The record gives the reactivity of an RNA of 207 nucleotides to DMS and 2A3.
[RMDB]
RNA sequence: GGGAACGACUCGAGUAGAGUCGAAAAGAGAGGGUAACCAACGGCGCGCGUCACUGAUAUAUCCACCGGGGGGUAAGGGGAGAAAAGGAUACAGCGCGACGAAGUUAGCACGCUGCCCCGUAAGGCUUGAAGAGUGUAGUGUUCGCACUACACUCAAGAAUCAAUCUAGUUUCGACUAGAUUGAUUCAAAAGAAACAACAACAACAAC
Reactivity to DMS in 0.01 (KOAc 150mM, MgCl2 10mM, bicine 150mM(pH8.5), 24C), signal-to-noise 2, nucleotides 027 to 156: g020a100g020a060g020g010g000u000a020a110c030c000a100a140c030g000g020c030g020c060g030c050g010u010c080a140c070u000g010a110u000a090u000a110u010c020c040a130c080c030g000g020g040g020g030g050u020a070a090g000g010g000g020a110g020a070a080a110a080g000g020a110u010a050c050a060g000c010g010c030g010a030c010g000a130a090g020u000u000a080g010c030a040c070g010c010u000g020c000c010c010c060g010u010a080a110g000g010c060u000u020g010a120a130g000a030g060u000g040u000a030g020u000g040u000u000c270g020c000a030c000u010a010c010a000c000u000c000a020a060
Reactivity to 2A3 in 0.01 (KOAc 150mM, MgCl2 10mM, bicine 150mM(pH8.5), 24C), signal-to-noise 4, nucleotides 027 to 156: g070a010g000a010g000g010g040u050a030a070c030c020a070a050c040g030g000c000g000c000g000c000g050u040c040a030c060u060g050a060u060a020u030a030u220c030c040a070c070c050g000g020g000g040g000g000u070a090a060g010g000g000g030a040g080a010a070a010a010g020g000a010u050a070c040a020g000c000g010c010g030a010c010g000a040a020g040u050u080a030g040c030a010c100g050c040u070g010c000c000c000c020g020u020a040a020g040g010c060u090u120g100a170a080g000a060g000u000g000u000a000g000u000g010u020u030c130g020c030a000c000u000a000c000a000c000u000c000a000a000

Notes:
Conditions: 150 mM KOAc, 10 mM MgCl2 and 150 mM bicine (pH 8.5), 24 C. DMS adducts were read by reverse transcription with MarathonRT. 2A3 adducts were read by reverse transcription with SuperScript II with manganese.